Structure probing data (DMS and 2A3) for a 177-nucleotide construct. DMS adducts were read by reverse transcription with MarathonRT. For 2A3, 2,212 sequencing reads were counted. Source: RMDB library OK2TRN, as collected in RNAgym. Values are in units of 0.01, from 0 to 300, in steps of 10. The reactions ran in a buffer of 150 mM KOAc, 10 mM MgCl2 and 150 mM bicine (pH 8.5), at 24 C. The DMS profile rests on 2,638 reads.
RNA sequence: GGGAACGACUCGAGUAGAGUCGAAAACGGCGACCGCGCCUCUGCUGGCGGACAGCUGGCUUGCCGCGUUGCUCUGCCGGUCUGUGGAGGCGUGCCUGCAGGGCGGGAGUCGGCAGGACCUGCUGCGAUGUGUCUUAGCUUUCGAGCUAAGACACAUAAAAGAAACAACAACAACAAC
Reactivity to DMS in 0.01 (KOAc 150mM, MgCl2 10mM, bicine 150mM(pH8.5), 24C), signal-to-noise 2, nucleotides 027 to 126: c090g000g010c050g030a080c120c060g020c030g000c010c020u010c080u000g010c060u010g010g020c010g000g020a130c010a030g010c030u010g000g000c020u000u000g010c020c030g020c090g020u010u000g000c070u000c010u010g020c000c050g000g020u000c110u000g000u000g000g020a090g000g010c100g000u000g010c040c020u000g010c040a040g020g000g010c010g000g000g010a140g040u000c000g000g000c000a010g000g020a180c040c000u010g000c020u000g000c140g000
Reactivity to 2A3 in 0.01 (KOAc 150mM, MgCl2 10mM, bicine 150mM(pH8.5), 24C), signal-to-noise 2, nucleotides 027 to 126: c010g090g040c030g020a070c050c020g010c010g020c050c010u080c050u100g140c050u080g070g040c050g070g050a120c000a020g000c000u050g030g040c000u040u030g000c020c000g030c050g060u020u070g020c050u030c010u030g000c000c000g000g020u020c050u040g100u070g100g100a090g020g000c020g000u020g000c000c010u010g010c040a060g010g010g020c080g030g030g000a180g030u180c000g020g000c010a020g020g000a300c000c010u000g000c000u030g010c070g080